The data come from the RNA Mapping Database (RMDB), library OK3TST. Chemical mapping of a 207-nucleotide RNA with DMS and 2A3.
[RMDB]
RNA sequence: GGGAACGACUCGAGUAGAGUCGAAAAGAUCACCAAUAACGCAUUCACCUUGGUUCAAGAUCCGUUUGGAAAUUACGUGGUUCAGUAUAUCUGUAAGGGAUUCCACUACCUGCAUAACAGGCCAAGGCUAAUUUUCUUGCAACUUAAUUAUAGUGGAUCUCAAUUACCCUUUCGAGGGUAAUUGAGAAAAAGAAACAACAACAACAAC
Reactivity to DMS in 0.01 (KOAc 150mM, MgCl2 10mM, bicine 150mM(pH8.5), 24C), signal-to-noise 1, nucleotides 027 to 156: g000a130u020c030a300c020c070a080a150u000a130a120c090g020c020a090u000u020c050a040c030c060u000u030g030g010u000u000c120a120a120g020a080u000c050c060g000u000u000u000g010g030a050a110a090u010u000a020c050g020u010g030g040u010u000c040a070g020u000a110u000a040u030c030u000g040u020a080a170g020g010g030a110u000u000c050c020a030c010u010a040c010c000u010g000c010a090u010a060a070c060a130g000g010c020c050a080a100g020g010c070u000a040a030u020u010u000u000c040u010u000g020c030a030a110c080u000u000a080a100u000u000a100u010a090g010u010g020g010a110
Reactivity to 2A3 in 0.01 (KOAc 150mM, MgCl2 10mM, bicine 150mM(pH8.5), 24C), signal-to-noise 4, nucleotides 027 to 156: g060a070u130c100a030c090c020a020a100u210a170a040c080g010c050a050u090u110c040a020c030c000u010u030g000g040u160u160c100a080a010g020a050u030c000c020g070u050u080u100g120g040a100a080a080u160u060a050c050g050u090g050g050u040u080c030a050g040u030a120u020a040u300c010u030g070u060a050a110g020g020g000a050u070u000c010c010a030c010u010a020c010c000u000g040c060a030u060a140a120c040a030g030g000c000c000a000a000g040g030c010u060a100a070u040u080u150u110c070u050u060g040c030a080a060c040u080u290a090a060u270u110a210u040a120g010u050g030g000a020